[RMDB]
RNA sequence: GGGAACGACUCGAGUAGAGUCGAAAACUUCUCAAGAGUCCUUCGAGAGUUGAUAAGGAUGUCGGAACAAUGUCCCCUUGUUUUGCGCCUGUUCCGGCUGACAAGGAUACUUCGAAGAAUAGCUACAGCUGCCUGAGGCAUUCGUGCCUCAGGCAGCAAAAGAAACAACAACAACAAC
Reactivity to 2A3 in 0.01 (KOAc 150mM, MgCl2 10mM, bicine 150mM(pH8.5), 24C), signal-to-noise 1, nucleotides 027 to 126: c020u030u030c010u000c020a020a040g060a000g150u050c000c000u000u000c010g220a220g000a000g260u000u040g040a130u010a040a000g020g000a020u020g020u020c000g000g000a000a000c000a020a050u050g140u090c000c060c000c000u090u120g020u010u120u090u220g100c030g000c020c000u020g000u000u000c020c000g050g000c040u050g000a010c000a090a010g050g000a000u000a000c000u000u010c000g000a000a000g000a020a040u090a000g000c000u050a000c130a070